This 177-nucleotide RNA was probed chemically with 2A3 and DMS. The reactions ran in a buffer of 150 mM KOAc, 10 mM MgCl2 and 150 mM bicine (pH 8.5), at 24 C. For 2A3, 1,855 sequencing reads were counted.

RNA sequence: GGGAACGACUCGAGUAGAGUCGAAAACAGAUGACCUUAACAUAGGCACUGACUUGAAUUUCUUUGCAGUAAGUGCUACAUGUUGGGGUAGUCUUGAAACAGGAAAGACGGUUCGCCGUCUUUCCUGGGAUAAACACUCCUUCGGGAGUGUUUAUCCAAAAGAAACAACAACAACAAC
Reactivity to 2A3 in 0.01 (KOAc 150mM, MgCl2 10mM, bicine 150mM(pH8.5), 24C), signal-to-noise 2, nucleotides 027 to 126: c080a000g010a020u040g030a040c010c000u010u020a020a000c000a020u030a080g030g040c000a000c010u000g050a020c020u070u130g050a090a160u300u270u130c180u140u210u230g030c010a010g000u040a030a000g010u010g020c020u100a080c040a080u010g000u020u000g000g010g010g000u010a020g020u020c010u030u160g100a130a060a020c000a010g000g020a010a000a010g000a010c010g040g000u040u050c120g030c060c000g040u010c030u010u000u000c000c000u000g000
Reactivity to DMS in 0.01 (KOAc 150mM, MgCl2 10mM, bicine 150mM(pH8.5), 24C), signal-to-noise 1, nucleotides 027 to 126: c140a020g000a020u000g000a050c000c000u000u000a000a020c000a020u000a210g000g000c000a010c010u000g010a040c000u020u010g030a060a090u000u030u020c210u010u000u000g010c050a040g020u000a060a030g030u010g020c010u000a100c290a070u000g000u010u000g000g000g020g000u000a050g000u000c000u000u000g020a110a110a300c000a010g020g020a000a000a030g000a000c020g010g020u000u010c250g010c000c000g020u010c000u000u000u000c000c000u010g000